[RMDB]
RNA sequence: GGGAACGACUCGAGUAGAGUCGAAAAACGACGAACGGCUGGCGACGCUGCGUGCCGAGCGCGACGCGGCCGUGCUGGUGGCCGAAGGUAUCGAUGUCACAUUGCCCUCGACUCGGGUGCCGGCCGGGAACUAUCAGUACUUCGGUACUGAUAGUUCAAAAGAAACAACAACAACAAC
Reactivity to DMS in 0.01 (KOAc 150mM, MgCl2 10mM, bicine 150mM(pH8.5), 24C), signal-to-noise 5, nucleotides 027 to 126: a130c090g010a110c160g010a150a060c030g010g000c010u000g010g010c000g010a120c050g000c020u000g020c040g010u010g010c070c080g000a050g010c050g000c020g000a070c020g000c020g000g010c010c020g010u000g010c050u000g010g010u000g010g000c010c010g010a060a120g020g010u010a070u010c030g010a070u010g000u000c070a090c130a140u010u000g000c030c030c020u000c040g010a040c040u000c020g000g010g000u000g020c050c010g010g010c010c030g000g010
Reactivity to 2A3 in 0.01 (KOAc 150mM, MgCl2 10mM, bicine 150mM(pH8.5), 24C), signal-to-noise 5, nucleotides 027 to 126: a000c050g090a030c100g030a120a000c000g000g010c010u070g150g040c020g010a020c020g040c040u240g070c050g060u130g070c060c060g050a060g000c070g000c000g050a020c020g000c000g020g020c020c010g000u010g000c020u030g020g070u020g020g060c010c010g020a100a060g140g040u190a090u190c030g030a040u130g050u090c010a040c030a210u060u300g020c010c010c000u010c010g030a040c000u010c020g010g000g140u030g000c000c000g030g000c010c000g020g060